[RMDB]
RNA sequence: GGGAACGACUCGAGUAGAGUCGAAAAGUCAUGCCUUCGGGCAUGACAGGUACCGAGAGGUACCAUAUACAGUUUAGCAGUUCCAGACUAGACUGUAAGAAAGUUUAUUUACAAGUAGGUCCUCUUGUAAGUAGACUACGUAGGACCGAGGAACUGACUACAGAACCUUAUUCGUAAGGUUCUGUAGAAAAGAAACAACAACAACAAC
Reactivity to 2A3 in 0.01 (KOAc 150mM, MgCl2 10mM, bicine 150mM(pH8.5), 24C), signal-to-noise 1, nucleotides 027 to 156: g000u000c000a000u000g000c010c000u040u050c170g020g020g000c020a000u000g000a010c000a000g010g010u000a000c010c010g020a020g000a000g070g000u000a000c000c000a000u020a000u010a040c000a000g000u000u000u010a000g000c080a020g010u040u000c020c010a000g010a000c010u000a000g000a010c000u030g010u030a030a060g140a050a160a010g020u050u000u020a030u000u020u000a000c020a010a000g000u050a100g100g070u060c010c030u050c000u000u020g000u000a010a040g000u020a020g010a020c040u070a040c170g060u080a060g000g050a020c020c030g010a030g030g000a020a020c020u020g020a020
Reactivity to DMS in 0.01 (KOAc 150mM, MgCl2 10mM, bicine 150mM(pH8.5), 24C), signal-to-noise 1, nucleotides 027 to 156: g030u010c000a020u000g000c000c030u000u000c300g050g040g020c010a000u000g010a020c000a000g000g030u000a000c020c040g030a230g010a300g070g010u000a000c020c020a110u010a050u000a030c000a010g030u010u000u000a020g000c020a130g040u010u000c030c030a300g000a070c000u010a010g010a010c000u010g030u010a030a170g000a180a070a100g020u000u010u000a020u000u000u000a010c010a000a020g010u000a080g020g010u010c070c050u010c020u000u010g010u000a030a050g020u000a030g010a060c000u010a020c070g020u010a040g020g000a050c050c000g000a130g000g010a050a150c020u010g020a300
The data come from the RNA Mapping Database (RMDB), library OK3TST. This 207-nucleotide RNA was probed chemically with 2A3 and DMS. For 2A3 the reverse transcriptase was SuperScript II with manganese. Values are in units of 0.01, from 0 to 300, in steps of 10. Reactivities are given for positions 27 through 156. The RNA was probed in 150 mM KOAc, 10 mM MgCl2 and 150 mM bicine (pH 8.5) at 24 C. DMS adducts were read by reverse transcription with MarathonRT.